[RMDB]
RNA sequence: GGGAACGACUCGAGUAGAGUCGAAAAGCUUUAUUUCUUUUAGUAGAAAUUUUGGAAAAGAAGCAGCUAUGAUUGCAGGUUACCAGCAUAGUACUGAAUUUGAUGCAGUCAUCAUGAUAGAUUGUGAGGUAUACUACUCUUUCGAGAGUAGUAUACCAAAAGAAACAACAACAACAAC
Reactivity to 2A3 in 0.01 (KOAc 150mM, MgCl2 10mM, bicine 150mM(pH8.5), 24C), signal-to-noise 5, nucleotides 027 to 126: g000c020u060u070u070a050u050u070u010c020u000u140u110u120a250g100u100a050g200a100a110a090u150u050u110u130g100g040a000a000a090a130g020a080a010g010c030a000g000c010u050a030u070g030a050u010u030g030c050a020g090g050u120u080a090c120c000a010g000c020a070u100a120g050u120a140c040u040g050a100a070u090u110u180g060a060u090g010c010a000g010u000c010a010u000c020a020u130g090a070u090a100g160a210u010u050g040u040g080a050
Reactivity to DMS in 0.01 (KOAc 150mM, MgCl2 10mM, bicine 150mM(pH8.5), 24C), signal-to-noise 3, nucleotides 027 to 126: g010c020u000u000u010a050u000u010u000c000u000u000u030u040a100g000u030a050g000a050a060a050u000u010u000u020g020g010a040a050a080a300g020a030a030g020c050a070g020c060u010a020u000g000a000u000u010g000c000a030g010g000u010u040a110c120c010a020g010c040a140u020a140g010u020a060c020u000g000a070a140u020u020u000g010a130u000g010c000a010g000u000c010a030u010c180a070u030g010a070u010a040g010a100u000u000g010u000g000a120